[RMDB]
RNA sequence: GGGAACGACUCGAGUAGAGUCGAAAAGAUAUGGAAUAGUGACUUCGAUAAGACCUGAUCGGAAACGAUCAAGGUCUUUUGACGAAGAGCUAUUCCUAAGUCAAAACUCGAUGCUUCGGCAUCGAGACAAUGACGACGUCUUCGGACGUCGUCAUUGAAAAGAAACAACAACAACAAC
Reactivity to 2A3 in 0.01 (KOAc 150mM, MgCl2 10mM, bicine 150mM(pH8.5), 24C), signal-to-noise 1, nucleotides 027 to 126: g040a030u040a010u050g000g020a000a030u000a000g100u090g300a300c050u030u000c070g140a120u050a300a030g000a020c030c000u040g010a010u000c010g000g000a050a010a010c010g000a000u040c040a020a070g050g000u010c000u000u000u000u050g080a020c000g010a010a010g010a000g000c010u000a000u010u000c010c000u000a040a000g020u000c000a040a000a110a280c000u010c000g000a000u010g010c040u100u080c300g060g010c010a000u030c000g000a000g000a040
Reactivity to DMS in 0.01 (KOAc 150mM, MgCl2 10mM, bicine 150mM(pH8.5), 24C), signal-to-noise 2, nucleotides 027 to 126: g020a030u010a300u000g020g010a030a030u000a030g020u000g010a240c000u030u000c000g000a200u040a010a010g000a010c000c000u000g000a030u010c010g000g000a120a030a110c000g000a010u000c000a040a090g010g000u000c000u000u000u000u010g010a210c110g010a000a000g000a300g000c020u000a000u000u000c000c020u000a080a080g000u010c010a160a010a090a140c000u000c000g000a000u000g020c000u000u000c290g030g000c000a000u000c000g000a000g000a120
Conditions: 150 mM KOAc, 10 mM MgCl2 and 150 mM bicine (pH 8.5), 24 C. The record gives the reactivity of an RNA of 177 nucleotides to 2A3 and DMS. It was measured as part of the RMDB library TTRDES. For 2A3, 1,238 sequencing reads were counted. The DMS profile rests on 1,062 reads. For DMS the reverse transcriptase was MarathonRT. Reactivities are given for positions 27 through 126.